[RMDB]
RNA sequence: GGGAACGACUCGAGUAGAGUCGAAAAGACAGAUGUUUGGAGCGUGUUCAUGGAAAACCUGGCGUUCCCAUCAUGUUUGAACGUGAAUGAAUGUGUUAACGAGUUACUUGUUAAUCACAUGGAAAUGUAUCUUACUGGGGUUCGCCCCAGUAAGAUAAAAAGAAACAACAACAACAAC
Reactivity to 2A3 in 0.01 (KOAc 150mM, MgCl2 10mM, bicine 150mM(pH8.5), 24C), signal-to-noise 3, nucleotides 027 to 126: g010a020c030a000g050a070u040g120u150u160u170g100g000a010g010c030g010u040g070u150u210c090a200u200g000g000a100a260a220a230c010c010u000g020g000c000g030u000u020c020c000c000a010u000c000a030u000g040u020u060u090g060a090a030c110g060u030g150a040a020u150g040a130a000u010g020u000g000u020u020a000a010c030g000a040g100u210u140a130c050u020u040g000u020u000a010a030u240c020a000c010a000u010g020g020a090a130a010u150g010
Reactivity to DMS in 0.01 (KOAc 150mM, MgCl2 10mM, bicine 150mM(pH8.5), 24C), signal-to-noise 4, nucleotides 027 to 126: g010a030c050a040g000a050u000g010u000u010u010g020g010a060g010c040g020u000g010u010u000c020a030u020g020g000a190a100a090a150c020c060u000g000g010c010g010u000u000c000c010c010a070u000c010a060u000g010u000u000u010g010a120a130c110g000u010g000a060a110u010g000a110a020u000g010u000g010u000u000a010a010c010g020a020g010u010u010a110c110u000u000g000u000u000a010a010u010c010a010c000a000u000g000g000a090a070a100u000g000